This 177-nucleotide RNA was probed chemically with DMS and 2A3. For DMS the reverse transcriptase was MarathonRT.
[RMDB]
RNA sequence: GGGAACGACUCGAGUAGAGUCGAAAAAGACUUGAAUCGAAGGGGCACUGCCCUUAUAGUGCAAAGCAUGGUUGUAAUUCCGGCAACCCGGAGACGUUCUGGACGCGGGUUCGAUUCCCGCCACCUCAUCUGAACAUGAAUUCGUUCAUGUUCAGAUAAAAGAAACAACAACAACAAC
Reactivity to DMS in 0.01 (KOAc 150mM, MgCl2 10mM, bicine 150mM(pH8.5), 24C), signal-to-noise 9, nucleotides 027 to 126: a070g010a080c010u000u010g010a080a110u000c010g000a180a210g000g000g010g010c010a130c220u020g010c000c010c010u000u000a020u020a140g020u000g000c300a100a030a030g020c070a270u010g000g000u000u000g000u000a050a160u010u010c020c020g020g000c030a020a040c030c000c120g000g000a040g010a090c020g010u000u000c010u000g000g020a080c210g000c000g000g000g010u000u010c160g010a300u020u020c000c000c000g000c020c110a070c070c060u020c150
Reactivity to 2A3 in 0.01 (KOAc 150mM, MgCl2 10mM, bicine 150mM(pH8.5), 24C), signal-to-noise 9, nucleotides 027 to 126: a000g050a080c020u020u020g030a050a010u040c020g030a060a030g050g000g000g000c050a080c300u210g020c010c020c000u010u030a220u060a020g030u030g000c010a020a070a010g040c060a100u120g030g020u020u000g040u110a110a190u100u020c050c010g040g010c020a040a050c010c010c000g040g010a010g010a020c020g010u010u010c020u040g090g030a050c050g000c000g020g000g000u020u070c030g020a020u090u030c010c000c000g010c000c020a060c010c020u110c000